[RMDB]
RNA sequence: GGGAACGACUCGAGUAGAGUCGAAAAACACGUGCUGCACUGCGAUCAUGUCUCUGCCUGAGUAGACAGCCUGACCGCGGUAGGACAGGUAGAUCGCUCGCACGAAGUAGUCGCUCUUGCAGAACUCUACUCCCGGUAGGUUCGCCUACCGGGAGUAAAAAGAAACAACAACAACAAC
Reactivity to DMS in 0.01 (KOAc 150mM, MgCl2 10mM, bicine 150mM(pH8.5), 24C), signal-to-noise 1, nucleotides 027 to 126: a110c070a200c040g020u000g030c010u000g000c110a100c160u000g000c000g010a000u000c010a240u010g000u000c020u000c040u000g010c080c090u010g020a050g010u000a010g000a050c090a300g000c130c020u010g020a090c000c010g040c110g000g000u040a070g000g000a100c010a030g010g000u000a120g000a090u000c030g000c000u000c120g010c000a030c080g020a100a090g000u000a120g000u010c040g020c010u000c070u010u000g000c120a060g000a120a030c020u050c080
Reactivity to 2A3 in 0.01 (KOAc 150mM, MgCl2 10mM, bicine 150mM(pH8.5), 24C), signal-to-noise 1, nucleotides 027 to 126: a020c080a030c030g010u020g070c010u080g000c060a090c110u040g010c040g000a010u000c000a030u090g060u000c020u000c000u130g050c070c040u130g070a040g010u080a040g010a040c010a000g010c000c010u010g020a020c000c000g000c100g070g140u170a050g010g040a020c010a000g030g000u020a030g000a100u020c020g000c010u030c000g020c000a020c060g000a040a000g060u100a010g000u000c030g000c020u010c020u030u090g050c090a020g040a130a050c010u000c010